Conditions: 150 mM KOAc, 10 mM MgCl2 and 150 mM bicine (pH 8.5), 24 C.
This 177-nucleotide RNA was probed chemically with 2A3 and DMS.
For DMS the reverse transcriptase was MarathonRT.
For DMS, 6,652 sequencing reads were counted.
RNA sequence: GGGAACGACUCGAGUAGAGUCGAAAAGAUAUGGAAUAUUAAGGGAGAGCGUGUUCGGAAACGAACACAGCUCGAGGAUCUUACUGUAUUCCUAAGUCAAACCAGGGCACGUUCGCGUGCCCUGGAAGUGAACUAUAGAGUUCGCUCUAUAGUUCACAAAAGAAACAACAACAACAAC
Reactivity to 2A3 in 0.01 (KOAc 150mM, MgCl2 10mM, bicine 150mM(pH8.5), 24C), signal-to-noise 2, nucleotides 027 to 126: g010a000u020a000u050g000g000a000a000u020a010u050u030a020a000g010g000g000a040g000a000g010c010g000u020g000u000u000c000g000g010a010a000a000c000g000a000a000c000a010c000a010g010c000u000c000g010a050g000g010a010u010c010u010u030a060c110u070g030u070a010u000u000c010c000u010a010a000g020u000c000a100a010a070c010c000a000g010g000g000c000a010c020g020u120u170c300g030c010g180u000g000c020c000c010u000g000g000a010a030
Reactivity to DMS in 0.01 (KOAc 150mM, MgCl2 10mM, bicine 150mM(pH8.5), 24C), signal-to-noise 3, nucleotides 027 to 126: g000a020u010a000u010g000g000a010a010u000a000u000u000a020a000g000g000g010a010g000a010g020c010g010u000g000u000u000c000g030g000a000a000a030c000g020a020a010c000a000c010a040g030c000u000c000g000a060g030g010a030u000c010u000u000a010c300u000g000u000a010u000u000c000c000u000a010a220g000u000c000a150a140a300c010c010a000g010g010g030c020a010c010g010u000u000c300g020c000g020u010g000c000c000c000u010g000g000a020a040